[RMDB]
RNA sequence: GGGAACGACUCGAGUAGAGUCGAAAACUAACCUGUUCAUCAAUUGCAAUAGAGGACUCAGAGGUUAUUGCACAAAACCUAGCUAUGUUACAAGACAAUUCUAUUCUGUUUCCUGGAACAAAAGCCUAUGAGGAAGACGUGUCUAUACCUGAAAUUGAUCCUAUUGAGAGUUCGCUCUCAAUAGGAUAAAAGAAACAACAACAACAAC
Reactivity to 2A3 in 0.01 (KOAc 150mM, MgCl2 10mM, bicine 150mM(pH8.5), 24C), signal-to-noise 4, nucleotides 027 to 156: c010u030a030a050c010c040u080g000u140u090c100a130u080c030a120a190u120u090g070c030a040a070u040a130g050a040g020g050a040c030u030c130a030g010a010g050g000u070u030a080u090u060g020c040a010c040a060a100a020a030c020c010u020a010g000c050u050a040u150g050u050u050a020c020a040a030g030a040c040a050a060u090u050c050u100a170u090u050c030u050g000u040u030u000c020c020u050g050g010a070a030c040a060a130a020a010g040c010c000u120a090u170g050a010g040g010a020a030g060a020c030g010u010g020u030c050u080a030u030a100c010c010u040g050a060a080a020u020u160g010
Reactivity to DMS in 0.01 (KOAc 150mM, MgCl2 10mM, bicine 150mM(pH8.5), 24C), signal-to-noise 2, nucleotides 027 to 156: c060u000a100a080c030c020u000g100u000u000c060a100u000c040a080a120u000u010g030c010a060a140u000a090g000a130g000g010a070c060u010c040a070g040a090g030g000u000u000a030u000u000g050c010a100c040a060a070a080a070c030c030u000a070g000c000u000a080u000g000u000u000a060c040a060a060g030a070c020a040a110u010u000c030u000a140u020u000c040u000g020u000u010u000c020c020u000g010g010a060a070c050a040a080a040a150g000c050c020u010a060u010g030a090g020g010a030a070g010a060c090g010u010g040u000c040u000a100u000a080c020c060u000g010a040a030a180u000u010g010